[RMDB]
RNA sequence: GGGAACGACUCGAGUAGAGUCGAAAACUCGCAUGGCAGUAGAGGCCGGAUACCUGCUGCUCAGCGUCAAGGCUGAGGUGGAGCACGGUCAAUUUGAAGGCGGUGUUGAGGAACUGGGUCUCACCCGGUAUCGCGCGGCUGAAUUAAUGCGCCAAGCGAGUCCAAAAUACUUCGGUAUUUUGGACUCAAAAGAAACAACAACAACAAC
Reactivity to 2A3 in 0.01 (KOAc 150mM, MgCl2 10mM, bicine 150mM(pH8.5), 24C), signal-to-noise 1, nucleotides 027 to 156: c010u010c000g000c030a040u020g010g000c060a040g090u130a070g050a100g060g000c000c010g020g000a060u110a080c000c010u040g020c060u090g060c000u110c000a010g000c000g080u190c140a170a060g220g020c000u000g000a020g000g030u060g040g030a040g020c050a010c030g000g000u000c000a030a150u110u100u150g040a080a040g000g000c100g030g010u010g000u080u300g010a030g030g040a060a040c030u020g020g000g050u070c080u050c100a130c000c010c010g000g000u040a060u030c010g000c020g000c000g150g020c040u000g000a000a000u050u060a070a020u090g040c030g000c010c000a030a000g020c000
Reactivity to DMS in 0.01 (KOAc 150mM, MgCl2 10mM, bicine 150mM(pH8.5), 24C), signal-to-noise 1, nucleotides 027 to 156: c020u000c070g000c040a200u000g030g030c010a110g030u000a160g000a150g010g020c000c000g020g000a150u000a000c060c020u000g000c000u000g010c000u000c040a110g030c000g040u000c220a100a130g040g010c020u000g000a070g040g030u000g040g000a060g030c070a100c000g000g000u000c000a110a100u000u010u000g000a140a290g010g050c000g000g020u000g000u020u000g000a080g000g000a050a080c000u000g000g020g030u000c210u000c100a100c030c010c010g030g000u000a050u010c050g000c000g020c000g020g000c030u000g000a130a110u000u020a100a120u000g030c030g000c010c010a020a190g030c080